The record gives the reactivity of an RNA of 177 nucleotides to DMS and 2A3. 2A3 adducts were read by reverse transcription with SuperScript II with manganese. For DMS the reverse transcriptase was MarathonRT. Conditions: 150 mM KOAc, 10 mM MgCl2 and 150 mM bicine (pH 8.5), 24 C.
[RMDB]
RNA sequence: GGGAACGACUCGAGUAGAGUCGAAAAACUAUAGUACGCACAGCGUACUAUGUUGAUCUUUAGAUCAGCUUCUUAUCUGCUUCGGCAAAUACAAACUUAGAUUGAUGUAUGCAGAGUAUGAAAUAUAAAUCGUUAAGGUCUUCGGACCUUAACGAUUAAAAGAAACAACAACAACAAC
Reactivity to DMS in 0.01 (KOAc 150mM, MgCl2 10mM, bicine 150mM(pH8.5), 24C), signal-to-noise 2, nucleotides 027 to 126: a200c020u020a030u000a010g000u000a000c000g030c010a200c200a170g000c000g050u000a000c000u000a000u010g010u000u000g000a000u010c010u020u040u020a110g020a040u030c030a060g030c020u030u000c040u000u000a100u000c030u000g010c010u010u000c040g020g060c120a030a040a070u010a070c140a070a050a160c110u020u050a130g000a170u020u010g000a080u010g010u030a040u000g010c030a060g000a010g000u030a000u000g000a040a110a090u000a050u010a090
Reactivity to 2A3 in 0.01 (KOAc 150mM, MgCl2 10mM, bicine 150mM(pH8.5), 24C), signal-to-noise 3, nucleotides 027 to 126: a010c020u020a010u000a010g000u000a000c000g020c000a230c070a300g000c000g020u030a000c000u000a000u000g000u010u040g040a060u000c050u070u230u110a070g000a010u000c050a000g040c030u000u050c050u110u180a070u000c000u010g030c010u050u030c020g100g020c030a000a090a010u170a070c080a050a170a000c080u190u140a070g050a080u050u110g040a020u020g010u050a020u050g040c020a020g010a000g000u100a090u180g080a010a070a000u180a020u070a040